[RMDB]
An RNA of 207 nucleotides, treated with 2A3 and read out base by base.
2A3 adducts were read by reverse transcription with SuperScript II with manganese.
RNA sequence: GGGAACGACUCGAGUAGAGUCGAAAAACAGUCAGUACGCUGACUGAGGGAAACGGGAGCCGGGCUUGGGACAAGAGCCAUCCCAAGUCCAAGGCCAAGUAGGCUCUAGUGGUGGUACGCCAUCACAAAAACUGGUCUACCUUCGGGUAGACCAGAAGUGCAGUGUAUUGUUCGCAAUACACUGCACAAAAGAAACAACAACAACAAC
Reactivity to 2A3 in 0.01 (KOAc 150mM, MgCl2 10mM, bicine 150mM(pH8.5), 24C), signal-to-noise 1, nucleotides 027 to 156: a000c000a010g000u000c000a000g010u050a060c160g040c090u000g000a000c010u020g000a130g010g050g020a100a160a070c080g060g060g030a040g020c070c070g040g010g000c000u000u000g010g000g010a000c020a110a070g010a000g000c000c000a010u000c010c000c010a010a000g000u000c000c010a080a010g020g000c010c010a080a000g050u130a120g040g010c000u010c010u020a020g000u000g000g000u000g000g010u040a030c240g060c010c010a000u010c000a000c020a010a050a000a000a010c000u000g000g000u000c000u000a000c000c000u010u050c160g110g010g010u010a000g000a000c010c000a000g000a000a020

The 2A3 profile rests on 2,581 reads.